The record gives the reactivity of an RNA of 177 nucleotides to 2A3 and DMS. It was measured as part of the RMDB library OK2TST. Conditions: 150 mM KOAc, 10 mM MgCl2 and 150 mM bicine (pH 8.5), 24 C.
RNA sequence: GGGAACGACUCGAGUAGAGUCGAAAAAAGGAAUUUAUUUUGCUGAGUUCAGCUAUCAGGUUUUGCAAGGAAACGACUUCUUGUACUUGUUUGAUAAUUACAAUGUUACUUUGCAACUUGGCGGAUCGCAUUAUAUACUGUUCGCAGUAUAUAAUGCAAAAGAAACAACAACAACAAC
Reactivity to 2A3 in 0.01 (KOAc 150mM, MgCl2 10mM, bicine 150mM(pH8.5), 24C), signal-to-noise 8, nucleotides 027 to 126: a000a000g180g020a120a020u170u170u070a110u050u130u220u120g010c010u010g010a050g080u080u110c040a020g000c030u030a040u120c020a020g020g020u030u100u140u080g000c000a000a010g030g010a060a090a050c080g100a090c080u080u020c010u050u040g010u010a030c030u060u080g110u140u130u130g110a090u120a120a030u080u020a040c030a030a040u100g020u050u020a050c030u070u080u050g020c000a010a020c010u010u020g030g000c010g040g020a040u080c070
Reactivity to DMS in 0.01 (KOAc 150mM, MgCl2 10mM, bicine 150mM(pH8.5), 24C), signal-to-noise 9, nucleotides 027 to 126: a070a070g020g010a080a050u010u000u000a070u020u010u000u010g020c050u000g010a130g010u000u000c050a090g020c060u000a060u000c040a030g000g010u000u000u000u000g010c000a010a010g000g000a070a050a050c090g010a110c220u010u010c230u000u000g010u000a020c140u000u000g010u000u010u010g010a100u010a020a040u000u000a020c040a020a030u010g000u000u000a060c030u000u000u000g000c020a020a030c060u000u000g010g010c120g000g010a080u010c180
Reactivities are rounded to 0.1 and cut off at 0 and 3.